RNA sequence: GGGAACGACUCGAGUAGAGUCGAAAAGAUAUGGAUCGGAAGUGGAGCGCAAUGUUACUCGGAAACGAGUAAUGACGAACUACUCCACCCGAUCCUAAGUCAAAAUCAGCAAGUUCGCUUGCUGAAAUCAUACUAAAAGCUUCGGCUUUUAGUAUGAAAAAGAAACAACAACAACAAC
Reactivity to DMS in 0.01 (KOAc 150mM, MgCl2 10mM, bicine 150mM(pH8.5), 24C), signal-to-noise 6, nucleotides 027 to 126: g000a030u000a230u000g000g000a010u000c000g010g010a140a150g040u010g000g000a010g010c300g020c110a120a130u010g010u000u000a010c010u000c000g010g000a050a040a100c000g000a010g010u000a000a010u000g010a060c170g010a080a100c220u010a170c000u000c000c010a010c020c000c000g000a010u000c010c000u000a000a040g010u000c020a090a060a080a120u000c000a000g000c000a020a010g000u000u010c240g000c000u000u000g000c000u000g000a000a060a080
Reactivity to 2A3 in 0.01 (KOAc 150mM, MgCl2 10mM, bicine 150mM(pH8.5), 24C), signal-to-noise 6, nucleotides 027 to 126: g020a010u030a010u090g000g000a010u010c010g000g040a300a250g090u010g010g000a040g060c180g020c220a040a060u130g010u030u010a000c000u000c000g010g000a030a020a010c010g000a000g000u000a000a010u030g060a020c050g030a140a090c130u300a140c000u280c010c000a000c010c010c000g010a000u000c000c000u000a010a000g000u000c020a020a000a010a300u040c000a000g010c000a010a000g010u100u160c250g060c190u000u000g000c000u000g000a010a000a000